[RMDB]
RNA sequence: GGGAACGACUCGAGUAGAGUCGAAAAGCCCAAGACCGAGAUGGGGGAAGAAGGUGGUUUGCCUGCCCUCCCAGGCUUGCUGGGUGUCUGCCCGUGGCUGGGCCCUGGCCCCGGGCUCAGGGUGGUGAUCCCCCAUUAGAUUCGUCUAAUGGGGGAUAAAAGAAACAACAACAACAAC
Reactivity to 2A3 in 0.01 (KOAc 150mM, MgCl2 10mM, bicine 150mM(pH8.5), 24C), signal-to-noise 2, nucleotides 027 to 126: g010c020c000c010a010a030g090a070c060c040g030a000g020a110u080g010g000g020g000g000a040a050g060a030a020g060g040u100g020g280u120u190u220g040c010c010u010g010c000c020c000u030c010c010c000a010g040g040c070u050u130g000c040u030g000g030g020u070g040u020c050u050g000c040c000c010g040u060g050g000c020u020g000g050g020c070c000c030u020g040g000c010c000c010c010g000g000g000c050u050c030a010g020g000g010u050g010g030u050g010
Reactivity to DMS in 0.01 (KOAc 150mM, MgCl2 10mM, bicine 150mM(pH8.5), 24C), signal-to-noise 7, nucleotides 027 to 126: g010c000c000c000a100a100g010a090c140c040g000a070g010a100u000g000g000g000g010g020a090a100g010a110a050g010g010u000g010g010u010u010u010g010c020c010u010g000c180c040c010u000c010c010c010a040g010g010c090u000u010g010c050u000g000g000g010u000g010u000c070u010g000c010c010c030g010u000g000g010c040u000g000g000g020c030c030c020u000g000g000c010c010c040c120g000g000g000c020u000c050a040g000g010g010u000g010g010u010g010
Chemical mapping of a 177-nucleotide RNA with 2A3 and DMS.
DMS adducts were read by reverse transcription with MarathonRT.
The 2A3 profile rests on 2,279 reads.
The reactions ran in a buffer of 150 mM KOAc, 10 mM MgCl2 and 150 mM bicine (pH 8.5), at 24 C.